The record gives the reactivity of an RNA of 177 nucleotides to 2A3 and DMS. Conditions: 150 mM KOAc, 10 mM MgCl2 and 150 mM bicine (pH 8.5), 24 C. Reactivities are rounded to 0.1 and cut off at 0 and 3. For DMS, 967 sequencing reads were counted. Source: RMDB library RFMREP, as collected in RNAgym.
RNA sequence: GGGAACGACUCGAGUAGAGUCGAAAAUGAUUGGCGCAGGGGUACGGACCUCAGCUGAAUCAUGGGAGCUGAAUGUAUGUGUGUCUCUGCCCUCCUGCAUGUGGCAGGUUGAUGGGGAGCACUUACACGUCAGUAGAGACUUCGGUCUCUACUGACGAAAAGAAACAACAACAACAAC
Reactivity to 2A3 in 0.01 (KOAc 150mM, MgCl2 10mM, bicine 150mM(pH8.5), 24C), signal-to-noise 1, nucleotides 027 to 126: u050g010a030u000u080g000g020c070g000c120a110g000g090g000g020u100a040c100g080g210a050c010c010u030c000a000g000c030u080g030a060a040u060c010a070u030g040g090g110a140g020c030u080g050a100a140u090g060u000a010u000g050u000g000u030g270u020c000u000c010u030g060c040c020c000u000c000c010u020g030c010a070u300g030u100g300g000c010a000g000g000u020u050g020a010u020g010g000g000g030a000g030c030a000c000u000u010a030c030a010
Reactivity to DMS in 0.01 (KOAc 150mM, MgCl2 10mM, bicine 150mM(pH8.5), 24C), signal-to-noise 1, nucleotides 027 to 126: u000g000a070u000u010g000g010c020g020c160a050g060g000g000g000u000a080c250g010g010a100c050c040u000c050a190g000c010u000g010a070a020u010c090a060u010g010g020g000a140g030c110u010g000a110a080u010g000u000a010u000g000u010g010u000g010u000c000u000c010u000g010c180c010c000u000c000c000u000g040c020a120u000g020u030g020g010c000a000g000g010u000u000g000a070u000g010g010g010g010a300g000c010a000c010u000u000a020c020a090